[RMDB]
RNA sequence: GGGAACGACUCGAGUAGAGUCGAAAAGAUAUGGACGCAUGGUUCGCGAUAAGAUAUCGAUCGGAAACGAUCGAAUAUCUUUUGACGCGAUCAUGCGUCCUAAGUCAAAAGGUAGGUUCGCCUACCACAAUUAUAGGCAGUUCGCUGCCUAUAAUUGAAAAGAAACAACAACAACAAC
Reactivity to DMS in 0.01 (KOAc 150mM, MgCl2 10mM, bicine 150mM(pH8.5), 24C), signal-to-noise 9, nucleotides 027 to 126: g010a030u000a300u010g010g000a020c000g010c000a010u000g010g010u010u010c020g040c000g030a200u010a010a020g000a010u000a000u000c000g010a000u000c000g010g000a060a070a150c000g010a010u000c000g000a030a020u000a000u000c000u000u000u010u010g020a150c170g020c000g000a010u000c000a000u000g000c000g010u000c000c000u000a000a050g010u000c030a120a090a130a120g020g010u000a010g010g010u000u010c300g010c010c000u000a010c010c010a100
Reactivity to 2A3 in 0.01 (KOAc 150mM, MgCl2 10mM, bicine 150mM(pH8.5), 24C), signal-to-noise 8, nucleotides 027 to 126: g010a010u040a020u080g000g000a000c000g000c010a000u010g020g170u300u300c050g000c100g120a070u120a300a000g000a000u010a000u010c000g000a000u000c000g010g010a030a020a020c000g000a000u010c000g000a010a010u010a000u000c000u040u040u060u100g110a100c210g000c000g000a010u000c000a000u000g000c000g000u000c000c000u000a000a000g000u000c010a000a000a020a060g000g000u010a000g010g050u040u090c240g170c070c000u000a010c000c000a010
Structure probing data (DMS and 2A3) for a 177-nucleotide construct. For 2A3, 39,551 sequencing reads were counted. Reactivities are given for positions 27 through 126. For DMS, 30,238 sequencing reads were counted. The reactions ran in a buffer of 150 mM KOAc, 10 mM MgCl2 and 150 mM bicine (pH 8.5), at 24 C.